Conditions: 150 mM KOAc, 10 mM MgCl2 and 150 mM bicine (pH 8.5), 24 C. An RNA of 177 nucleotides, treated with 2A3 and read out base by base. Values cover nucleotides 27 to 126. It was measured as part of the RMDB library OK1LIB.
[RMDB]
RNA sequence: GGGAACGACUCGAGUAGAGUCGAAAAUACAGGUAGACGUCCUCCAGCCCAACCUCCUCUAUCGUGACGCUCUCCGCGUCAACCCUCGAGGCUAUCUCGGAGGCCUCACCGCGGUCGCGCGCGUAGAGUCCGUAGCCGUCUUCGGACGGCUACGGACAAAAGAAACAACAACAACAAC
Reactivity to 2A3 in 0.01 (KOAc 150mM, MgCl2 10mM, bicine 150mM(pH8.5), 24C), signal-to-noise 1, nucleotides 027 to 126: u110a040c140a000g090g000u020a070g020a050c050g000u060c000c000u000c030c060a030g040c030c000c000a000a010c000c000u020c000c000u150c080u130a080u210c020g030u060g090a050c030g030c000u060c030u010c050c000g000c000g000u000c030a040a070c000c020c020u070c110g010a000g030g000c060u110a120u140c030u030c130g130g000a030g030g010c000c000u050c000a020c000c000g000c030g000g090u140c010g000c000g000c000g000c000g050u040a000g020a000
For 2A3, 631 sequencing reads were counted.